[RMDB]
RNA sequence: GGGAACGACUCGAGUAGAGUCGAAAACUGGGUUAUCCAUCAGGCGGAGCUAGCCUGAAAGCUAGGUGCAUUUCUCUGGGGACACAGGGAACAGAGAGAAGAGGGGCGAGAGGGAUCAAUAGAUGGGGCUAACCAUUAUGUUCGCAUAAUGGUUAGCAAAAGAAACAACAACAACAAC
Reactivity to 2A3 in 0.01 (KOAc 150mM, MgCl2 10mM, bicine 150mM(pH8.5), 24C), signal-to-noise 1, nucleotides 027 to 126: c010u040g000g040g050u160u100a090u010c020c040a050u030c010a010g030g080c050g020g050a090g140c030u060a010g020c000c010u010g050a000a000a000g060c040u060a000g000g070u050g050c030a120u020u060u040c020u000c000u010g000g030g000g050a040c050a020c040a160g060g000g040a000a030c030a000g090a020g000a000g060a130a030g030a050g050g000g000g030c120g060a060g030a030g070g010g010a030u050c050a030a110u070a090g050a060u040g010g000g080
Reactivity to DMS in 0.01 (KOAc 150mM, MgCl2 10mM, bicine 150mM(pH8.5), 24C), signal-to-noise 2, nucleotides 027 to 126: c050u020g000g020g020u000u010a050u000c080c060a230u000c030a040g030g040c080g020g000a120g050c110u010a110g020c000c000u020g010a080a130a080g000c050u000a000g010g010u000g010c060a190u000u000u000c010u000c000u000g000g000g040g030a110c100a160c170a010g000g040g010a080a100c120a060g000a140g000a080g000a040a080g000a060g050g020g000g010c130g000a040g000a090g010g020g010a090u000c070a000a150u000a030g000a040u010g010g000g010
The record gives the reactivity of an RNA of 177 nucleotides to 2A3 and DMS.
Values are in units of 0.01, from 0 to 300, in steps of 10.
DMS adducts were read by reverse transcription with MarathonRT.
The RNA was probed in 150 mM KOAc, 10 mM MgCl2 and 150 mM bicine (pH 8.5) at 24 C.